[RMDB]
RNA sequence: GGGAACGACUCGAGUAGAGUCGAAAAUGAAAUAAACGGCACCAAUAAGGAGGUGCCGAACAAGCGUGACCUACCUAGACGCAACAAGCAGUCAGGUAAGACUGCAAAGGAAAGGAAAACAAAAAAACUCACAUAUUAAGUUCGCUUAAUAUGUGAGAAAAGAAACAACAACAACAAC
Reactivity to DMS in 0.01 (KOAc 150mM, MgCl2 10mM, bicine 150mM(pH8.5), 24C), signal-to-noise 4, nucleotides 027 to 126: u000g000a090a060a050u000a070a090a110c010g000g040c000a000c000c000a080a140u010a100a160g030g000a190g000g010u000g010c000c010g010a050a060c130a070a090g010c000g010u010g010a100c050c030u000a070c020c020u010a080g020a050c060g000c050a090a090c190a090a110g010c020a020g000u000c010a090g020g000u010a080a080g000a010c010u000g000c000a030a060a090g000g000a050a020a060g010g000a070a040a060a040c070a010a040a080a080a040a080a090
Reactivity to 2A3 in 0.01 (KOAc 150mM, MgCl2 10mM, bicine 150mM(pH8.5), 24C), signal-to-noise 3, nucleotides 027 to 126: u040g020a020a000a030u180a060a090a020c010g000g000c010a000c010c000a010a150u240a190a060g150g040a050g010g010u000g000c010c010g000a000a020c000a030a040g010c010g020u030g030a080c000c000u010a050c030c000u030a060g020a100c020g010c050a040a060c040a150a050g000c000a010g000u010c000a010g190g000u030a030a020g010a010c010u010g030c000a040a020a000g080g020a100a080a000g060g000a080a050a020a050c060a020a100a010a010a000a010a020